[RMDB]
RNA sequence: GGGAACGACUCGAGUAGAGUCGAAAAGGAAGCCUGCUUCAGACAGGAGUAAUCCCCGCUGAAACAGGGUUUUCACCCUUCCUUUCUUCGGGUUUCCUUCCUCUGCUUGCGGCCUCGCCCGGAGUCUCAGUAUAAGUCUGUUCGCAGACUUAUACUGAAAAGAAACAACAACAACAAC
Reactivity to DMS in 0.01 (KOAc 150mM, MgCl2 10mM, bicine 150mM(pH8.5), 24C), signal-to-noise 1, nucleotides 027 to 126: g000g000a050a040g030c040c000u010g030c000u000u000c010a050g010a020c160a120g000g000a030g000u010a020a030u000c160c000c000c040g000c020u000g000a010a010a010c150a010g000g000g000u000u000u000u000c190a100c030c040c010u000u010c020c020u000u000u000c010u010u000c010g020g020g010u000u010u000c000c020u000u000c060c070u000c020u000g000c180u010u010g020c020g010g010c010c050u000c030g000c000c010c010g040g000a100g010u010c080u000
Reactivity to 2A3 in 0.01 (KOAc 150mM, MgCl2 10mM, bicine 150mM(pH8.5), 24C), signal-to-noise 3, nucleotides 027 to 126: g030g000a030a010g020c020c060u100g020c090u030u010c010a050g020a110c170a150g000g020a000g020u030a020a020u050c010c010c000c000g000c000u010g040a010a010a050c300a140g030g010g020u070u060u160u250c120a040c000c000c000u030u030c010c000u020u020u010c000u010u010c010g000g010g030u000u010u020c000c000u030u010c010c010u030c000u010g120c140u040u060g020c020g020g000c000c010u000c020g020c010c000c010g020g020a040g090u010c030u040

The record gives the reactivity of an RNA of 177 nucleotides to DMS and 2A3.
For 2A3 the reverse transcriptase was SuperScript II with manganese.
The data come from the RNA Mapping Database (RMDB), library VIROID.